[RMDB]
RNA sequence: GGGAACGACUCGAGUAGAGUCGAAAAGAUAUGGAUCCGCGAAUAGCUUGGACCGUACGGGAUCGGAAACGAUCUUACGCUAGCUAAACGGAUCCUAAGUCAAAAGUUCAACGUUCGCGUUGAACAACUUUUGAGAAUACUUCGGUAUUCUCAAAAGAAAAGAAACAACAACAACAAC
Reactivity to DMS in 0.01 (KOAc 150mM, MgCl2 10mM, bicine 150mM(pH8.5), 24C), signal-to-noise 4, nucleotides 027 to 126: g010a020u000a030u000g000g000a010u000c000c010g000c100g010a170a300u000a030g020c000u000u010g010g000a010c300c000g000u000a030c300g000g000g000a010u000c000g000g000a020a000a030c000g010a020u000c000u010u000a010c000g000c000u000a010g020c010u000a050a240a110c000g000g010a000u000c000c000u000a000a080g000u000c000a110a110a120a160g000u000u000c010a010a000c000g020u000u010c240g030c010g020u000u000g000a010a000c000a100a110
Reactivity to 2A3 in 0.01 (KOAc 150mM, MgCl2 10mM, bicine 150mM(pH8.5), 24C), signal-to-noise 5, nucleotides 027 to 126: g000a000u020a000u050g000g000a000u000c010c010g010c070g160a220a300u160a100g010c010u090u300g040g010a020c010c020g000u000a020c150g070g010g000a010u020c000g000g000a000a000a000c000g000a000u000c000u000u010a000c000g000c010u030a020g000c000u000a090a040a010c010g000g000a000u000c000c000u000a010a010g000u000c010a020a080a090a200g000u000u010c000a010a010c020g010u080u090c300g040c010g120u020u010g000a000a000c000a010a020